Conditions: 150 mM KOAc, 10 mM MgCl2 and 150 mM bicine (pH 8.5), 24 C. Structure probing data (DMS and 2A3) for a 207-nucleotide construct. For 2A3 the reverse transcriptase was SuperScript II with manganese. 2A3 is a SHAPE reagent: it acylates the 2'-hydroxyl of flexible nucleotides of all four kinds. It was measured as part of the RMDB library M2RFPK.
[RMDB]
RNA sequence: GGGAACGACUCGAGUAGAGUCGAAAAAUGGCGAAUGCAUGGGGAACUACAUCUGUGUCGCGAGUUCGAUUCUCGCCAGGGCCUGGUCCUGUAGCUCAGUUGGUAGAGCAAGCUGUUCCCCUGACACAAAAUCCAGCUAGGUUCGCCUAGCUGGAAACGAUUACUUUUCCUUCGGGAAAAGUAAUCGAAAAGAAACAACAACAACAAC
Reactivity to DMS in 0.01 (KOAc 150mM, MgCl2 10mM, bicine 150mM(pH8.5), 24C), signal-to-noise 2, nucleotides 027 to 156: a090u010g000g000c010g000a060a070u000g000c060a080u010g000g000g000g030a040a060c030u000a030c040a070u010c080u020g030u000g010u000c010g020c010g010a050g000u000u000c030g010a300u000u000c000u000c000g020c000c030a040g020g020g000c020c060u010g090g000u010c050c000u030g040u000a080g020c060u000c010a060g010u000u000g000g020u000a080g010a060g080c020a140a190g010c060u010g000u000u000c010c000c010c000u000g000a270c030a060c050a040a090a080a070u010c010c000a040g000c000u010a020g000g030u000u000c300g000c020c000u000a010g010c000u000g000g000a000a000a040
Reactivity to 2A3 in 0.01 (KOAc 150mM, MgCl2 10mM, bicine 150mM(pH8.5), 24C), signal-to-noise 2, nucleotides 027 to 156: a010u140g050g010c080g100a150a060u130g000c040a050u100g000g010g000g010a030a030c060u090a030c080a100u110c050u020g060u020g050u180c000g010c000g000a000g010u000u020c020g020a000u010u000c000u010c000g000c010c000a000g040g000g000c040c280u150g170g000u030c010c010u010g000u020a020g000c010u000c010a050g020u180u120g170g110u200a000g000a010g000c000a010a010g040c040u030g000u000u000c020c000c010c000u010g000a000c000a000c020a030a100a010a050u000c000c000a000g000c000u000a000g020g020u040u030c080g030c020c000u000a000g000c000u000g000g000a000a010a000

For DMS the reverse transcriptase was MarathonRT. For 2A3, 1,730 sequencing reads were counted.